[RMDB]
RNA sequence: GGGAACGACUCGAGUAGAGUCGAAAAGAUAUGGAUAGAUAGAGCUUUUGACGGUUGGCAUUCGGAAACGAAUGUACAACCGAUAAGCUCGUCUAUCCUAAGUCAAACGUGCUGUUCGCAGCACGAACGUACGUCCAUAGUUCGCUAUGGACGUACGAAAAGAAACAACAACAACAAC
Reactivity to DMS in 0.01 (KOAc 150mM, MgCl2 10mM, bicine 150mM(pH8.5), 24C), signal-to-noise 2, nucleotides 027 to 126: g010a000u010a300u010g000g010a000u000a000g000a020u010a100g010a000g010c010u000u000u000u000g030a270c110g040g010u000u000g000g000c000a000u010u000c000g000g000a080a090a250c000g000a020a020u000g020u000a060c000a000a000c000c000g020a020u010a010a010g020c000u020c000g010u000c000u020a000u000c010c010u000a010a070g010u020c000a120a080a300c040g010u000g000c000u000g010u010u040c230g000c010a020g000c030a020c000g000a040a060
Reactivity to 2A3 in 0.01 (KOAc 150mM, MgCl2 10mM, bicine 150mM(pH8.5), 24C), signal-to-noise 2, nucleotides 027 to 126: g010a010u060a040u140g010g020a000u010a000g020a010u050a250g010a000g000c040u130u110u160u300g300a160c080g000g010u000u020g040g000c000a010u000u000c000g000g000a030a060a060c020g000a010a000u010g010u030a040c000a000a010c010c000g000a000u020a010a000g000c010u000c000g000u000c000u000a020u000c000c000u000a020a010g020u000c040a150a020a020c030g000u010g010c010u040g090u110u100c300g000c130a000g000c040a010c000g010a060a000
Structure probing data (DMS and 2A3) for a 177-nucleotide construct. 2A3 adducts were read by reverse transcription with SuperScript II with manganese. Conditions: 150 mM KOAc, 10 mM MgCl2 and 150 mM bicine (pH 8.5), 24 C.